[RMDB]
RNA sequence: GGGAACGACUCGAGUAGAGUCGAAAAACUUGUUUCGGACCCAUAGUCCGAAAGAUCUUUGUUGAUGGCGUGCCAUUUGUAGUAUCUUGUGGUUAUCACUACAAAGAAUUAGGUUUAGUCAUGAAUACAUUCUGACUUAUUUCGAUAAGUCAGAAUGAAAAGAAACAACAACAACAAC
Reactivity to 2A3 in 0.01 (KOAc 150mM, MgCl2 10mM, bicine 150mM(pH8.5), 24C), signal-to-noise 7, nucleotides 027 to 126: a010c050u090u130g040u050u020u020c020g000g010a030c000c020c170a240u210a060g000u000c000c000g010a000a000a000g100a040u050c060u090u070u080g040u020u060g090a120u010g020g000c070g030u060g000c000c010a030u020u000u060g050u020a060g000u020a070u120c070u050u230g070u130g080g060u120u100a050u110c040a000c000u010a010c000a000a020a010g100a080a130u200u160a130g050g060u050u050u120a060g010u030c030a040u080g090a050a030u140a100
Reactivity to DMS in 0.01 (KOAc 150mM, MgCl2 10mM, bicine 150mM(pH8.5), 24C), signal-to-noise 4, nucleotides 027 to 126: a060c070u010u000g010u000u000u000c000g000g000a020c000c140c250a110u070a150g000u000c000c000g020a020a010a040g010a070u020c040u010u010u000g030u000u000g010a040u000g010g000c030g000u010g010c020c000a130u000u000u010g000u010a050g000u010a060u010c070u020u020g020u020g000g000u030u030a080u020c160a020c000u010a000c010a010a000a010g000a070a120u030u030a080g000g020u010u020u030a100g010u000c050a040u010g000a060a060u010a170